This 177-nucleotide RNA was probed chemically with 2A3. The RNA was probed in 150 mM KOAc, 10 mM MgCl2 and 150 mM bicine (pH 8.5) at 24 C. Reactivities are rounded to 0.1 and cut off at 0 and 3. Values cover nucleotides 27 to 126.
[RMDB]
RNA sequence: GGGAACGACUCGAGUAGAGUCGAAAAGAAAGAGGAAGGUGAUCUUUACAUCAGGUCCUCGGUGGUUUAUUGCUCAUCGUUUGUUUAUAAUAAACCAUCGUGGAGCCGAUGAAAAGAGCACCUCCAACUGCAUGGCCUCUUUCGAGAGGCCAUGCAGAAAAGAAACAACAACAACAAC
Reactivity to 2A3 in 0.01 (KOAc 150mM, MgCl2 10mM, bicine 150mM(pH8.5), 24C), signal-to-noise 1, nucleotides 027 to 126: g010a020a010a000g180a040g000g070a200a020g010g000u000g000a040u020c000u000u000u000a070c000a000u000c190a100g010g050u000c000c000u020c030g000g000u000g030g000u000u000u000a020u000u010g010c060u050c140a220u040c150g190u070u050u300g120u140u150u000a180u020a110a000u000a000a000a060c000c000a000u000c000g030u000g000g000a000g220c010c030g000a000u000g010a000a000a000a000g000a000g020c000a000c000c000u020c000c000a020a020